[RMDB]
RNA sequence: GGGAACGACUCGAGUAGAGUCGAAAAGGCGACGUGGGCCGCAGCGUGGACGGCUCCCGUCACGUGACCGCGACCGAGUGGACCCUGAUCGCCGUCGCCGCCGUCACGGCAUCCGGUGCGUGGCUGAGCUUUUCCAGUAAUUCGUUACUGGAAAAGCAAAAGAAACAACAACAACAAC
Reactivity to DMS in 0.01 (KOAc 150mM, MgCl2 10mM, bicine 150mM(pH8.5), 24C), signal-to-noise 4, nucleotides 027 to 126: g020g010c040g000a020c010g020u010g000g000g020c000c000g040c040a140g020c070g020u020g000g010a140c030g000g000c050u000c050c030c020g000u000c030a030c030g020u000g010a110c100c090g010c040g010a060c060c020g010a120g020u010g010g000a160c040c030c020u000g010a060u000c080g020c050c020g000u000c070g020c030c050g010c050c070g000u010c030a050c060g010g010c040a140u010c060c050g010g000u000g020c040g030u000g010g010c030u010g000a180
Reactivity to 2A3 in 0.01 (KOAc 150mM, MgCl2 10mM, bicine 150mM(pH8.5), 24C), signal-to-noise 4, nucleotides 027 to 126: g040g010c030g000a020c030g020u080g020g030g000c000c010g000c010a010g050c060g110u110g070g070a070c010g000g000c040u010c030c030c010g040u030c030a010c030g060u070g060a070c030c010g020c030g030a030c030c000g030a050g050u060g050g080a090c010c010c010u040g070a160u140c050g010c030c010g020u050c020g020c020c030g020c040c010g050u080c040a030c070g060g000c010a050u040c040c020g060g020u050g020c040g010u020g000g000c020u030g010a010